The record gives the reactivity of an RNA of 207 nucleotides to 2A3 and DMS. Reactivities are given for positions 27 through 156. The reactions ran in a buffer of 150 mM KOAc, 10 mM MgCl2 and 150 mM bicine (pH 8.5), at 24 C. For DMS the reverse transcriptase was MarathonRT. It was measured as part of the RMDB library M2RFPK. 2A3 adducts were read by reverse transcription with SuperScript II with manganese.
RNA sequence: GGGAACGACUCGAGUAGAGUCGAAAAGUUCGCAUGGUGCACGAUUGUGUUAUUAGUAACUAAGUAAGCUUACAAUCGAAAAUGUUUAACCAUAAAAGGGUAAAAUGGUGUAAGACAGUCUGAUACUUUACGGCUUCACGUUUCGACGUGAAGCCAAGAAGCAAAUAGGGUUCGCCCUAUUUGCUUCAAAAGAAACAACAACAACAAC
Reactivity to 2A3 in 0.01 (KOAc 150mM, MgCl2 10mM, bicine 150mM(pH8.5), 24C), signal-to-noise 3, nucleotides 027 to 156: g050u070u040c050g060c050a010u060g040g010u040g040c080a000c080g010a050u040u040g010u000g000u080u040a070u040u050a070g110u080a090a020c050u020a060a000g150u040a120a020g130c030u070u090a000c040a050a140u030c010g070a140a040a000a000u000g040u010u060u070a030a000c000c000a010u080a090a180a040a010g040g000g000u060a040a060a060a030u090g010g030u030g000u060a070a070g020a060c010a020g030u120c050u070g040a060u050a140c010u070u090u060a090c100g010g010c010u000u000c000a000c000g000u000u060u150c240g070a020c000g000u000g000a000a000g000c000c000a000a000
Reactivity to DMS in 0.01 (KOAc 150mM, MgCl2 10mM, bicine 150mM(pH8.5), 24C), signal-to-noise 2, nucleotides 027 to 156: g000u000u000c040g030c000a220u010g000g020u010g060c070a110c000g010a100u000u010g020u000g050u020u000a100u000u010a100g010u020a060a150c090u000a070a080g030u000a110a120g010c110u000u000a030c020a040a060u010c040g000a070a060a070a080u000g010u000u000u010a100a030c010c000a070u000a110a080a100a060g000g000g000u010a020a020a060a010u000g000g010u000g000u020a030a060g000a100c040a110g000u010c010u000g000a160u000a050c060u000u000u000a110c140g020g040c030u000u000c000a000c010g000u020u000u010c300g020a080c000g060u000g000a010a010g020c000c000a000a000